Conditions: 150 mM KOAc, 10 mM MgCl2 and 150 mM bicine (pH 8.5), 24 C. Structure probing data (2A3) for a 207-nucleotide construct. 2A3 adducts were read by reverse transcription with SuperScript II with manganese.

[RMDB]
RNA sequence: GGGAACGACUCGAGUAGAGUCGAAAACUGGUGUUCAGUGCGACUGCAGUCAGUGUUGAGUGGUGCCAUGUGGGCCGCUCUAUUCCAAAGGAAUCAUGGAUUAGACCCAAGGGCUGAGCUCCUCUAGGGCAGGACCUGCACCCUGUGUGUUGGCACCGCCUUAUGCAUACUUCGGUAUGCAUAAGGCAAAAGAAACAACAACAACAAC
Reactivity to 2A3 in 0.01 (KOAc 150mM, MgCl2 10mM, bicine 150mM(pH8.5), 24C), signal-to-noise 2, nucleotides 027 to 156: c020u030g000g030u040g020u130u120c030a030g010u030g050c000g080a050c050u020g000c020a090g040u070c010a010g030u010g040u110u100g040a060g020u020g040g060u080g060c000c000a090u150g030u150g050g000g010c030c020g020c050u010c000u010a050u050u000c020c010a010a030a070g110g060a060a110u170c090a100u130g000g020a020u040u050a050g030a090c020c020c020a050a050g020g000g000c030u070g040a050g070c040u050c010c000u030c060u070a070g030g030g000c020a060g030g030a060c020c000u020g000c020a060c000c030c010u060g000u010g010u020g010u040u020g020g000c000a010c000c040